About this RNA
Structure probing data (2A3 and DMS) for a 177-nucleotide construct. 2A3 is a SHAPE reagent: it acylates the 2'-hydroxyl of flexible nucleotides of all four kinds.

RNA sequence: GGGAACGACUCGAGUAGAGUCGAAAACCUUUUUUUUGGUGAUUGUGUAGAGUGGCGACCUGUGUGGGUUGAAGAGGGGGCGUGAGUUCCUUUGGACCUUGCAGGUAUGUGGAUCCUGGUAGUAGUAGAAGCUUGAUAUAUUCGUAUAUCAAGCUUCAAAAGAAACAACAACAACAAC
Reactivity to 2A3 in 0.01 (KOAc 150mM, MgCl2 10mM, bicine 150mM(pH8.5), 24C), signal-to-noise 2, nucleotides 027 to 126: c020c000u030u010u010u000u000u000u040u130g060g000u050g070a180u050u120g020u030g080u160a020g000a060g150u020g030g000c000g030a010c000c000u010g000u000g020u130g050g010g050u070u000g030a180a100g070a030g030g010g010g010g050c010g030u070g020a060g000u010u040c000c000u010u070u040g030g010a030c000c010u000u090g000c000a000g020g010u050a030u050g020u020g020g060a030u080c010c010u030g110g000u060a050g000u010a000g000u000a010
Reactivity to DMS in 0.01 (KOAc 150mM, MgCl2 10mM, bicine 150mM(pH8.5), 24C), signal-to-noise 4, nucleotides 027 to 126: c010c000u000u000u010u010u020u000u020u010g000g010u010g010a090u000u000g010u000g010u010a050g000a120g040u000g010g000c050g010a060c030c020u000g020u000g000u010g010g010g000u000u010g010a080a120g000a030g000g020g010g000g010c010g000u020g000a170g010u000u000c000c000u010u000u000g000g000a040c020c010u010u010g010c020a040g010g010u000a030u010g030u000g010g010a060u000c030c020u000g010g010u000a050g010u010a080g010u010a140